[RMDB]
RNA sequence: GGGAACGACUCGAGUAGAGUCGAAAAGAUGAGAGUUCAACUAUACUUAGGUAGUUGGUUUGAAUCACAAUUCAAACGUUGUGCCUAAGUACACAACGUGAAGAGUGAGCUCUUCACAACUCUCAGAGAUAGGUUUGAUAUUCGUGUCAGAUCUAUCAAAAGAAACAACAACAACAAC
Reactivity to 2A3 in 0.01 (KOAc 150mM, MgCl2 10mM, bicine 150mM(pH8.5), 24C), signal-to-noise 9, nucleotides 027 to 126: g160a070u060g000a000g000a000g010u040u130c070a070a050c060u080a020u010a060c000u010u010a000g000g010u020a040g140u060u100g070g000u000u000u000g010a010a010u090c100a050c070a170a080u010u000c000a000a000a010c060g140u070u070g030u040g020c000c000u000a010a000g010u010a010c030a000c010a030a060c070g000u000g000a000a000g010a000g030u150g120a080g090c010u000c000u000u000c000a000c000a000a010c000u000c000u000c010a000g000a000
Reactivity to DMS in 0.01 (KOAc 150mM, MgCl2 10mM, bicine 150mM(pH8.5), 24C), signal-to-noise 9, nucleotides 027 to 126: g020a140u010g010a010g000a000g010u010u020c170a110a120c220u020a190u000a010c000u000u000a010g010g010u000a090g010u010u010g010g010u000u000u000g000a010a010u010c300a120c300a100a150u000u000c000a010a010a010c000g010u010u010g010u000g000c020c010u010a010a010g000u000a020c190a050c200a080a080c170g010u000g000a010a010g000a020g010u030g010a160g030c010u000c000u000u000c000a000c010a060a010c000u000c000u000c000a030g010a140
Chemical mapping of a 177-nucleotide RNA with 2A3 and DMS. The RNA was probed in 150 mM KOAc, 10 mM MgCl2 and 150 mM bicine (pH 8.5) at 24 C. It was measured as part of the RMDB library OK1LIB. For DMS the reverse transcriptase was MarathonRT. For DMS, 69,121 sequencing reads were counted.